[RMDB]
RNA sequence: GGGAACGACUCGAGUAGAGUCGAAAAGAUAUGGAAUGUCCAUCGAGCUAUGAAGAUGUUCGGAAACGAACAUUGGAGCUCGUGGCAUUCCUAAGUCAAAAGGUAUUGGGCUUCGGCCCAAUACCAAGAUCAGGAAUAUCUUCGGAUAUUCCUGAUCAAAAGAAACAACAACAACAAC
Reactivity to DMS in 0.01 (KOAc 150mM, MgCl2 10mM, bicine 150mM(pH8.5), 24C), signal-to-noise 4, nucleotides 027 to 126: g000a040u010a300u010g000g010a030a000u000g010u020c000c060a180u030c090g010a020g020c010u000a260u010g010a160a180g000a020u000g000u000u000c000g010g000a090a070a160c010g010a010a000c000a010u000u010g000g000a020g020c000u000c010g020u000g000g000c000a000u000u000c000c000u000a000a040g010u010c010a100a080a110a160g000g000u000a000u000u000g000g010g010c000u000u020c300g030g010c000c000c000a000a010u000a000c000c000a040a030
Reactivity to 2A3 in 0.01 (KOAc 150mM, MgCl2 10mM, bicine 150mM(pH8.5), 24C), signal-to-noise 5, nucleotides 027 to 126: g010a010u040a020u080g000g010a000a010u010g080u070c020c020a100u300c260g000a000g000c020u090a260u300g000a000a000g010a010u010g000u010u000c000g000g010a030a020a010c000g000a000a010c000a000u000u010g000g010a000g000c010u010c040g030u130g000g000c010a000u000u000c000c000u000a030a010g030u010c030a070a000a080a170g000g000u000a000u010u010g000g010g000c030u080u170c300g110g000c000c000c000a000a000u000a010c000c000a000a000

The record gives the reactivity of an RNA of 177 nucleotides to DMS and 2A3. Conditions: 150 mM KOAc, 10 mM MgCl2 and 150 mM bicine (pH 8.5), 24 C. Source: RMDB library TTRDES, as collected in RNAgym. In probing experiments dimethyl sulfate is read out at A N1 and C N3, which are open when not base-paired. For DMS the reverse transcriptase was MarathonRT.